[RMDB]
RNA sequence: GGGAACGACUCGAGUAGAGUCGAAAAAUUUAGAAAAGAGAUUGCCGUACGAUAUGUAUAUUAUUCAUGGUAAGGUCUUAGAUAUAGACGAAAUAUUAGAGAAAGUGUAUUCAUCACCUAACGUAUCGAUAAUUAUUUCUACUCCUUAUUUGGAAUCUAGUAUACCAAAUUUCGAUUUGGUAUACUAAAAAGAAACAACAACAACAAC
Reactivity to DMS in 0.01 (KOAc 150mM, MgCl2 10mM, bicine 150mM(pH8.5), 24C), signal-to-noise 3, nucleotides 027 to 156: a090u020u010u000a130g010a150a100a120a180g000a180g000a150u000u000g020c000c070g030u000a100c080g010a130u000a040u000g010u010a090u000a100u000u010a100u010u010c040a120u010g000g010u010a010a030g010g010u000c020u000u000a050g010a090u020a060u020a050g020a190c040g000a050a080a070u000a050u000u000a040g000a180g010a250a050a130g030u010g030u010a130u000u000c060a030u010c010a050c010c010u000a010a030c020g020u000a130u000c030g010a080u000a050a100u000u010a070u010u000u000c000u000a060c040u000c010c030u000u010a060u000u000u010g000g020a070a120u000c080
Reactivity to 2A3 in 0.01 (KOAc 150mM, MgCl2 10mM, bicine 150mM(pH8.5), 24C), signal-to-noise 3, nucleotides 027 to 156: a000u080u110u090a040g020a010a070a020a000g020a010g020a010u000u060g020c010c000g020u050a020c020g030a060u020a060u210g070u020a110u020a050u220u030a050u070u090c040a060u040g040g000u030a010a020g030g000u000c000u030u040a040g070a090u090a020u060a140g030a010c010g010a010a140a020u140a050u070u070a060g010a010g050a080a080a020g070u080g030u050a120u060u140c040a060u050c030a020c020c020u020a080a000c010g040u050a030u120c010g010a010u050a050a030u080u060a050u010u100u000c010u010a040c020u030c010c010u140u080a150u130u160u160g040g010a040a020u070c020